The record gives the reactivity of an RNA of 207 nucleotides to 2A3. The reactions ran in a buffer of 150 mM KOAc, 10 mM MgCl2 and 150 mM bicine (pH 8.5), at 24 C. 2A3 adducts were read by reverse transcription with SuperScript II with manganese. The data come from the RNA Mapping Database (RMDB), library OK3TST. For 2A3, 590 sequencing reads were counted.

[RMDB]
RNA sequence: GGGAACGACUCGAGUAGAGUCGAAAAGGGUGGCAAGGUGACUGACACAAAGUGACUUUCAGGGCUGUGGUCAGGCCCAUGUGGUGGUGUGAUGGGUGUGUGCACAUAUGCCUCAGGUGUGCUUUUGGGACUGCAUGGAUAUGUGUGUGCUCAAACGCCAACGCUAAGCAUUCGUGCUUAGCGUUGGAAAAGAAACAACAACAACAAC
Reactivity to 2A3 in 0.01 (KOAc 150mM, MgCl2 10mM, bicine 150mM(pH8.5), 24C), signal-to-noise 1, nucleotides 027 to 156: g060g000g000u000g000g060c120a040a020g090g020u030g020a120c060u020g000a000c000a000c010a080a130a010g050u080g060a130c040u160u150u100c190a040g000g000g000c040u020g000u020g020g120u010c020a020g010g060c000c040c000a010u130g020u050g000g000u000g020g010u040g040u090g010a020u030g000g040g010u050g000u000g050u040g120c000a000c010a010u110a010u100g150c000c040u040c000a010g000g010u030g020u000g010c000u040u060u110u100g040g040g040a040c030u020g000c060a130u100g030g030a070u080a050u090g020u020g030u000g050u060g010c000u000c100a090a000a010c000g020